[RMDB]
RNA sequence: GGGAACGACUCGAGUAGAGUCGAAAAGCUCAAGAUGUAAUUUACAGUAUGUACACAUUAGUAAGGAAGUACUUGAGUAAAACACAUGACACAAGAUCAAAGUGCUGGAUGAACCAUUUUCAUACUGAGCCAGUAGGUAGUUCGCUACCUACUGGCUAAAAGAAACAACAACAACAAC
Reactivity to DMS in 0.01 (KOAc 150mM, MgCl2 10mM, bicine 150mM(pH8.5), 24C), signal-to-noise 2, nucleotides 027 to 126: g040c010u000c010a020a000g000a020u000g030u040a110a090u010u000u000a160c000a060g060u030a010u100g000u000a070c170a100c150a000u040u030a100g050u000a000a030g000g040a140a160g010u040a070c000u000u020g000a070g000u020a010a100a180a090c230a090c120a030u090g000a150c210a050c280a080a050g010a090u020c070a090a000a070g000u000g000c000u000g000g020a110u000g010a200a180c180c000a180u000u000u010u000c020a000u020a080c170u000g000
Reactivity to 2A3 in 0.01 (KOAc 150mM, MgCl2 10mM, bicine 150mM(pH8.5), 24C), signal-to-noise 2, nucleotides 027 to 126: g000c020u020c000a060a100g090a070u060g070u190a270a040u140u060u100a000c000a010g090u140a060u120g040u150a000c190a000c000a140u110u150a030g050u070a100a050g090g070a040a030g070u020a060c000u000u000g030a000g010u030a000a080a040a000c120a030c030a120u220g100a020c000a000c010a160a070g020a110u050c050a080a000a050g050u010g030c020u080g000g100a140u160g060a060a030c020c010a060u020u010u030u020c060a030u110a090c000u020g040

Annotation: The record gives the reactivity of an RNA of 177 nucleotides to DMS and 2A3. The RNA was probed in 150 mM KOAc, 10 mM MgCl2 and 150 mM bicine (pH 8.5) at 24 C. For 2A3, 826 sequencing reads were counted. Source: RMDB library OK1LIB, as collected in RNAgym.